Conditions: 150 mM KOAc, 10 mM MgCl2 and 150 mM bicine (pH 8.5), 24 C. The record gives the reactivity of an RNA of 177 nucleotides to DMS and 2A3.
[RMDB]
RNA sequence: GGGAACGACUCGAGUAGAGUCGAAAAGAUAUGGAUCACAAUUGAGUCUAUCACUCGGAAACGAGUGAUGGACAAUGAUGUUGUGAGUCCUAAGUCGCAAAGGCUACGAUGUUCGCAUCGUAGCCAACUGUUGGUAUGUGUUCGCACAUACCAACAGAAAAGAAACAACAACAACAAC
Reactivity to DMS in 0.01 (KOAc 150mM, MgCl2 10mM, bicine 150mM(pH8.5), 24C), signal-to-noise 2, nucleotides 027 to 126: g020a020u000a020u000g000g000a050u000c010a000c010a000a010u000u010g000a050g000u000c010u010a000u000c000a000c000u000c000g010g000a010a000a000c000g030a000g010u000g010a000u000g000g030a020c010a070a300u020g010a010u000g000u000u000g030u000g010a060g000u010c000c010u020a010a130g010u000c010g000c290a090a070a140g000g000c000u000a010c000g010a000u010g000u010u000c190g040c000a010u000c000g000u000a000g000c000c000a010a000
Reactivity to 2A3 in 0.01 (KOAc 150mM, MgCl2 10mM, bicine 150mM(pH8.5), 24C), signal-to-noise 1, nucleotides 027 to 126: g000a000u020a000u030g000g010a000u010c010a000c000a000a020u020u040g020a000g000u000c010u000a010u000c000a000c010u000c000g000g000a020a010a000c000g010a010g000u000g010a000u010g010g010a000c010a000a020u000g000a000u010g020u030u000g010u010g010a030g070u030c000c000u010a000a000g020u000c030g000c110a130a130a110g020g000c010u010a000c010g010a000u020g050u070u160c300g000c220a020u000c000g000u010a000g000c010c000a000a000

It was measured as part of the RMDB library TTRDEL. 2A3 adducts were read by reverse transcription with SuperScript II with manganese.